Structure probing data (2A3) for a 207-nucleotide construct. The 2A3 profile rests on 519 reads.
RNA sequence: GGGAACGACUCGAGUAGAGUCGAAAAAGUCAGAGGGCACUACCAUGCAAACUAGGGCUGGCUACUCUUGCACAGAAUCACAUCUCGAUAAUUGUCAGUGCAAGAAGGACAAUUAUACCAUUUAAUGAAAACGUUUACCUGUUCGCAGGUAAACGAAGGUGUUGUGUGAGUUCGCUCACACAACACCAAAAGAAACAACAACAACAAC
Reactivity to 2A3 in 0.01 (KOAc 150mM, MgCl2 10mM, bicine 150mM(pH8.5), 24C), signal-to-noise 1, nucleotides 027 to 156: a000g100u090c080a030g040a070g140g110g000c040a000c050u040a070c090c000a030u020g030c060a110a060a170c140u120a000g030g070g010c000u000g000g000c010u000a040c000u010c000u000u000g000c010a000c000a000g180a100a050u100c020a000c030a270u050c100u110c120g010a000u000a020a010u040u050g020u000c010a000g000u020g030c010a000a000g050a010a050g040g000a000c010a000a000u020u020a050u050a180c060c030a030u070u120u300a150a110u220g070a020a020a020a020c010g000u010u010u000a000c000c000u000g030u120u060c170g030c050a000g000g000u000a000a000a000c000g010a000a010
2A3 is a SHAPE reagent: it acylates the 2'-hydroxyl of flexible nucleotides of all four kinds.